[RMDB]
RNA sequence: GGGAACGACUCGAGUAGAGUCGAAAAGAGGAUCGGCUGGGAAGAGUAUAUCCUAUGGGAAUCCCUGGCUUCCCCUUAUGUCCAGCCCCUCCCCGGUCCUGGUGAAGGGGGACUCCGGGACACCUUGCUUUAUCUAAACCUUCGGGUUUAGAUAAAGAAAAGAAACAACAACAACAAC
Reactivity to 2A3 in 0.01 (KOAc 150mM, MgCl2 10mM, bicine 150mM(pH8.5), 24C), signal-to-noise 2, nucleotides 027 to 126: g040a010g030g030a060u100c090g000g030c020u020g000g010g050a120a000g040a050g140u100a100u020a030u240c010c020u100a160u200g050g000g030a030a140u040c030c000c010u030g100g030c020u030u040c000c010c000c010u060u140a090u260g100u040c010c000a010g000c020c000c020c000u040c000c000c000c040g020g020u010c000c010u000g010g000u050g050a110a100g030g010g010g020g010a020c000u000c000c010g000g000g000a020c000a040c000c000u040u110g020
Reactivity to DMS in 0.01 (KOAc 150mM, MgCl2 10mM, bicine 150mM(pH8.5), 24C), signal-to-noise 2, nucleotides 027 to 126: g010a030g010g000a050u000c190g000g000c040u000g000g000g000a060a080g010a120g010u010a120u010a080u000c050c030u000a100u000g010g020g000a100a130u010c020c010c030u010g010g000c140u000u000c000c000c000c070u010u000a090u000g000u010c030c010a040g010c010c010c000c000u000c030c000c000c070g020g000u000c030c010u000g000g010u000g010a070a110g020g010g010g010g010a300c020u000c030c040g010g010g020a030c030a110c090c060u000u010g000